[RMDB]
RNA sequence: GGGAACGACUCGAGUAGAGUCGAAAAUGGAUAAAGGAACCCAAGAAGGAGGUCCCCUUUGAUAGAUUAAAAAGGAAAGGAGGAAAGAAAUAAUGGCUCGUGUACAGUUUAAACAACGUGAAUCUACUGACGCAAUCUUUGUUCACUGCUCGGCUACUGAUAUCAAUCAUUUCGAUGAUUGAUAUCAAAAAGAAACAACAACAACAAC
Reactivity to DMS in 0.01 (KOAc 150mM, MgCl2 10mM, bicine 150mM(pH8.5), 24C), signal-to-noise 2, nucleotides 027 to 156: u010g020g010a190u000a050a080a100g010g030a040a060c000c020c010a060a090g000a070a120g000g020a060g010g010u000c020c020c010c030u010u010u000g000a240u020a080g010a160u000u000a020a080a120a090a080g010g000a050a070a100g020g020a110g010g010a060a050a110g000a090a090a130u000a070a170u000g020g000c020u000c070g060u010g020u000a080c050a120g000u000u000u000a050a090a170c050a040a040c060g000u000g010a080a030u000c040u000a050c060u000g010a080c070g010c070a010a090u010c100u000u000u000g040u000u010c000a030c060u000g010c030u000c050g040g010c010u000a070c140
Reactivity to 2A3 in 0.01 (KOAc 150mM, MgCl2 10mM, bicine 150mM(pH8.5), 24C), signal-to-noise 2, nucleotides 027 to 156: u100g030g000a060u080a090a100a050g010g010a040a060c000c040c030a020a020g050a010a030g050g030a010g040g000u070c040c050c030c000u060u030u070g080a090u070a120g050a020u060u280a080a140a040a010a000g050g000a110a020a020g010g020a000g000g020a080a050a040g020a040a090a030u100a100a040u100g020g000c010u020c020g050u040g000u050a060c030a030g000u010u100u180a040a110a030c060a030a000c040g020u060g070a040a010u000c040u070a070c080u100g030a020c050g000c020a040a020u060c040u090u030u070g030u000u040c030a020c060u020g000c010u020c040g030g000c000u180a040c070

Background
Chemical mapping of a 207-nucleotide RNA with DMS and 2A3. 2A3 adducts were read by reverse transcription with SuperScript II with manganese. The reactions ran in a buffer of 150 mM KOAc, 10 mM MgCl2 and 150 mM bicine (pH 8.5), at 24 C. Source: RMDB library OK3TST, as collected in RNAgym.